[RMDB]
RNA sequence: GGGAACGACUCGAGUAGAGUCGAAAACCGUGAACCGUGCAUGCUGGCGCUGGCAGUACAACUACGUGUUCCCGAAGCGCGCCGUGAUCGCUCCCUUCUUCCAGCUGACCGUCGCCAGCAUGACGUUCGUGCGCUUCAUUUUCGAAUGAAGCGCACGAAAAGAAACAACAACAACAAC
Reactivity to 2A3 in 0.01 (KOAc 150mM, MgCl2 10mM, bicine 150mM(pH8.5), 24C), signal-to-noise 1, nucleotides 027 to 126: c000c000g020u080g130a010a030c090c080g010u140g090c060a000u000g020c000u000g000g020c000g000c050u060g030g000c000a000g000u050a040c020a120a010c060u140a030c090g080u080g040u090u020c010c000c000g050a030a010g050c060g030c040g000c000c010g000u040g010a070u120c040g130c050u000c030c000c060u020u090c040u090u020c020c000a000g000c000u060g060a210c000c000g030u020c000g000c000c000a000g050c000a000u020g000a000c000g000u000u030
The record gives the reactivity of an RNA of 177 nucleotides to 2A3. The data come from the RNA Mapping Database (RMDB), library RFM100. The 2A3 profile rests on 599 reads. Values cover nucleotides 27 to 126. Conditions: 150 mM KOAc, 10 mM MgCl2 and 150 mM bicine (pH 8.5), 24 C.